[RMDB]
RNA sequence: GGGAACGACUCGAGUAGAGUCGAAAAAUCGAGACUCUUUGGCGGUUGACGAAGGGAGACGCUUACGUGACGUCCGAUGUCGGGCAGCACCAGAUGUUUGCUGCACUUUAUUAUCCAUUCGACAAACCUCUAGUAGUCACUUCGGUGACUACUAGAGAAAAGAAACAACAACAACAAC
Reactivity to 2A3 in 0.01 (KOAc 150mM, MgCl2 10mM, bicine 150mM(pH8.5), 24C), signal-to-noise 3, nucleotides 027 to 126: a000u070c050g010a010g000a060c000u000c000u150u090u080g070g010c050g120g060u030u060g040a020c040g080a060a030g050g030g020a060g000a030c020g040c050u090u090a100c110g150u050g050a020c050g000u000c000c010g050a060u110g020u100c020g010g070g000c030a030g000c010a020c030c000a120g040a300u180g070u060u060u020g000c020u020g090c000a020c030u090u070u030a100u050u020a020u040c020c020a070u040u090c050g020a030c050a040a090a120c010
Reactivity to DMS in 0.01 (KOAc 150mM, MgCl2 10mM, bicine 150mM(pH8.5), 24C), signal-to-noise 2, nucleotides 027 to 126: a100u000c020g000a140g010a080c030u000c040u000u000u000g040g020c050g000g010u000u000g000a180c050g010a110a060g020g000g010a130g000a040c060g030c040u010u000a090c150g010u000g000a070c060g020u010c020c050g000a090u010g010u000c010g010g010g030c010a020g000c010a070c230c120a180g000a140u010g000u000u010u000g020c030u000g010c020a080c080u000u000u010a080u010u010a130u000c020c030a130u000u010c060g010a060c090a100a050a080c160